Background: Structure probing data (DMS and 2A3) for a 177-nucleotide construct. For 2A3, 7,653 sequencing reads were counted. For DMS the reverse transcriptase was MarathonRT.

RNA sequence: GGGAACGACUCGAGUAGAGUCGAAAAGAUAUGGAGAUCAUAGACAUGUCCCUGGAUCGGAAACGAUCCUGCGUAGGAUAGGACAACAGCUAUAUCUCCUAAGUCAAACGAUUCCUUCGGGAAUCGACUAUAAGUCGGAGUUCGCUCCGACUUAUAGAAAAGAAACAACAACAACAAC
Reactivity to DMS in 0.01 (KOAc 150mM, MgCl2 10mM, bicine 150mM(pH8.5), 24C), signal-to-noise 4, nucleotides 027 to 126: g000a010u000a060u010g000g000a020g000a000u000c300a010u000a000g000a080c030a300u020g020u000c000c010c020u000g000g010a020u010c000g000g000a020a010a050c010g010a020u000c000c000u010g000c190g020u010a140g020g020a250u020a130g000g000a040c000a110a090c200a120g000c010u000a010u000a020u000c000u010c000c000u000a010a110g000u000c010a090a110a200c020g000a010u000u000c000c000u000u000c280g070g000g010a020a020u000c000g010a140
Reactivity to 2A3 in 0.01 (KOAc 150mM, MgCl2 10mM, bicine 150mM(pH8.5), 24C), signal-to-noise 5, nucleotides 027 to 126: g000a010u010a010u060g020g010a000g000a000u060c070a010u190a000g110a140c160a300u300g010u000c000c000c000u020g010g000a000u000c000g000g050a020a020a010c010g010a000u000c000c000u020g010c190g200u280a210g100g300a300u170a220g010g020a040c060a300a050c050a300g000c010u010a000u000a000u030c000u000c000c000u000a010a010g010u000c070a130a040a130c020g010a010u020u000c000c000u030u070c200g040g000g010a000a000u010c010g010a030